[RMDB]
RNA sequence: GGGAACGACUCGAGUAGAGUCGAAAAAAAGCGGUCGGGCGGCCACGCCGGAAAUGCUGGCGACGCUCGCCAGCCGUGGUAUGGGCGCGUUAAGCGAUGCCGAAGGCUGCUGGCACCUGGAACAGGCGCCAAUAAAUGGCUUCGGCCAUUUAUUGGCAAAAGAAACAACAACAACAAC
Reactivity to DMS in 0.01 (KOAc 150mM, MgCl2 10mM, bicine 150mM(pH8.5), 24C), signal-to-noise 1, nucleotides 027 to 126: a040a060a070g000c000g080g000u000c020g050g000g010c040g010g050c020c090a090c030g000c010c000g000g010a130a120a030u010g010c000u010g020g000c000g010a140c300g020c190u000c020g040c020c020a040g050c040c060g000u020g010g000u010a080u010g010g000g000c010g010c010g020u000u010a080a090g010c040g010a080u020g020c030c000g030a110a110g020g010c010u000g020c070u000g010g000c040a090c000c020u010g010g030a080a060c080a090g000g010c190